The record gives the reactivity of an RNA of 177 nucleotides to 2A3 and DMS. 2A3 adducts were read by reverse transcription with SuperScript II with manganese. For DMS, 3,051 sequencing reads were counted. The data come from the RNA Mapping Database (RMDB), library OK1LIB. For 2A3, 3,723 sequencing reads were counted.
RNA sequence: GGGAACGACUCGAGUAGAGUCGAAAAUACGAAAUAAGCACAGAAGCAUGAUAUAGGGUCGUGCGUUGCUUGUUUAGUAGCGGUAGCAAGAGGCAACCACGACGAGAUGCACCUAACAUUGAGUUCACUGGUGCGUGCUAUUCGUAGCACGCGCCAGAAAAGAAACAACAACAACAAC
Reactivity to 2A3 in 0.01 (KOAc 150mM, MgCl2 10mM, bicine 150mM(pH8.5), 24C), signal-to-noise 2, nucleotides 027 to 126: u170a010c040g070a050a000a040u050a070a030g070c020a020c030a100g170a130a020g050c000a010u010g030a000u050a010u090a130g270g050g000u000c000g000u000g040c200g070u010u000g000c000u010u000g040u030u070u010a000g010u020a020g000c000g060g060u100a000g010c020a020a020g060a020g030g040c000a020a000c000c010a000c010g000a020c000g000a020g000a050u080g020c020a060c030c000u000a060a000c000a150u010u130g010a040g010u060u010c040a000
Reactivity to DMS in 0.01 (KOAc 150mM, MgCl2 10mM, bicine 150mM(pH8.5), 24C), signal-to-noise 2, nucleotides 027 to 126: u010a080c150g010a010a080a030u010a020a070g020c060a000c060a070g000a110a190g000c100a000u000g020a070u040a090u030a050g000g000g010u000c000g000u000g000c180g010u020u030g000c010u000u020g000u050u000u010a130g060u000a090g000c100g000g000u000a020g030c000a060a100g000a030g000g000c000a000a050c000c030a010c040g000a040c000g000a050g000a030u000g000c040a170c070c000u000a060a040c060a080u000u000g000a140g000u010u000c000a150